[RMDB]
RNA sequence: GGGAACGACUCGAGUAGAGUCGAAAAGCAGUCGCUUCGGCGACUGCGCAUAUCCUAAGUCGACCCGUUUGACGUUGUCAGCCAUUGGUCGGAAACGACCAUUGGCUUGGAUUUACCGAGGGUCGAUAUGGACUAAACGAUCACUUCGGUGAUCGAAGUAAGAUAGUAGGUUCGCCUACUAUCUUACAAAAGAAACAACAACAACAAC
Reactivity to DMS in 0.01 (KOAc 150mM, MgCl2 10mM, bicine 150mM(pH8.5), 24C), signal-to-noise 3, nucleotides 027 to 156: g010c010a020g000u010c000g020c010u010u000c300g030g010c000g010a010c000u000g010c010g010c110a070u000a100u000c010c000u000a100a260g020u000c000g000a120c000c010c010g000u010u000u000g010a130c210g000u000u000g000u000c020a100g000c000c000a040u000u000g010g020u000c010g030g000a080a110a300c010g010a040c000c010a040u000u000g010g030c020u000u000g000g000a040u010u000u000a040c010c010g000a100g030g030g020u000c000g010a020u000a070u010g000g010a120c070u000a050a090a200c030g000a020u000c000a010c020u010u010c290g050g000u010g000a010u010c010g000a020a090
Reactivity to 2A3 in 0.01 (KOAc 150mM, MgCl2 10mM, bicine 150mM(pH8.5), 24C), signal-to-noise 6, nucleotides 027 to 156: g000c010a000g000u000c010g020c060u150u220c300g140g000c000g000a000c000u000g000c000g000c010a080u070a090u160c010c000u030a130a040g030u000c000g000a000c000c020c020g040u090u110u210g020a030c030g020u020u040g030u030c000a000g000c000c000a010u010u010g010g010u000c020g040g010a110a100a010c010g000a000c000c000a000u000u000g000g000c010u000u030g010g000a010u130u060u270a020c020c030g020a060g000g000g020u000c000g000a000u010a030u030g020g000a020c050u220a100a110a040c020g040a000u040c030a000c000u040u090c230g090g000u000g000a000u000c010g010a070a020